[RMDB]
RNA sequence: GGGAACGACUCGAGUAGAGUCGAAAAGCGUAUGCAAAAAUGUGAUCUUGCUUGUAAAUACAAUUUUGAGAGGUUAAUCAAUUACAAGUAGUGCUAUUUUUGUCCCUCUCUGCAAUAGACAGCCAAAAGUAAUACGCCUGUUCGCAGGCGUAUUACUAAAAGAAACAACAACAACAAC
Reactivity to DMS in 0.01 (KOAc 150mM, MgCl2 10mM, bicine 150mM(pH8.5), 24C), signal-to-noise 1, nucleotides 027 to 126: g000c140g010u050a010u060g000c030a000a010a030a040a010u000g000u000g000a080u010c020u000u000g060c000u000u010g000u010a050a000a100u010a010c170a180a000u010u000u000u000g000a040g000a070g000g000u000u000a040a140u000c030a070a090u000u020a000c010a000a010g000u000a000g010u020g040c000u000a010u000u000u000u010u000g000u000c120c010c000u000c010u000c040u000g000c060a060a170u020a040g000a060c150a120g000c040c090a050a040a080
Reactivity to 2A3 in 0.01 (KOAc 150mM, MgCl2 10mM, bicine 150mM(pH8.5), 24C), signal-to-noise 3, nucleotides 027 to 126: g060c040g040u130a060u180g060c020a000a010a000a000a070u110g120u030g230a270u030c020u050u030g010c000u000u000g020u020a010a030a000u150a070c130a110a300u060u130u020u040g090a100g000a000g030g050u140u260a090a050u110c110a030a040u090u000a010c000a000a000g000u000a060g050u030g030c000u010a020u020u020u000u020u010g020u020c000c000c000u000c000u000c000u020g020c020a000a050u010a110g060a020c060a020g090c090c000a000a100a090
This 177-nucleotide RNA was probed chemically with DMS and 2A3.
For DMS, 1,506 sequencing reads were counted.
The RNA was probed in 150 mM KOAc, 10 mM MgCl2 and 150 mM bicine (pH 8.5) at 24 C.